[RMDB]
RNA sequence: GGGAACGACUCGAGUAGAGUCGAAAAUUGCUCAGGCAGCGUAACGCUGCUUGAAAGACCAAAUGAAAGUCCUGGCGGGUUAAGCGCCGCCAGGCGGGGUUCGGAGGCGCCUGGCAACAGAAGCCUCAUUACAUGGAAGACUUCGGUCUUCCAUGAAGUAGAUGAAAAUGUUCGCAUUUUCAUCUACAAAAGAAACAACAACAACAAC
Reactivity to 2A3 in 0.01 (KOAc 150mM, MgCl2 10mM, bicine 150mM(pH8.5), 24C), signal-to-noise 1, nucleotides 027 to 156: u080u110g000c000u000c000a020g000g000c020a000g020c020g040u060a140a110c180g000c020u000g000c010u000u000g000a010a020a000g030a010c000c010a020a150a000u290g050a190a000a000g300u010c000c000u000g000g000c020g000g020g000u050u080a020a070g030c070g130c100c000g040c000c000a000g000g000c020g000g010g000g000u060u300c160g110g000a000g010g000c000g010c000c050u060g300g000c030a000a000c000a000g000a000a000g000c000c010u000c000a000u000u020a000c000a000u000g000g000a030a000g000a000c000u010u060c300g040g000u000c000u000u020c000c000a000u000g000a000a000
An RNA of 207 nucleotides, treated with 2A3 and read out base by base. 2A3 adducts were read by reverse transcription with SuperScript II with manganese. The reactions ran in a buffer of 150 mM KOAc, 10 mM MgCl2 and 150 mM bicine (pH 8.5), at 24 C. High 2A3 reactivity points to a flexible backbone, as in loops and unpaired stretches.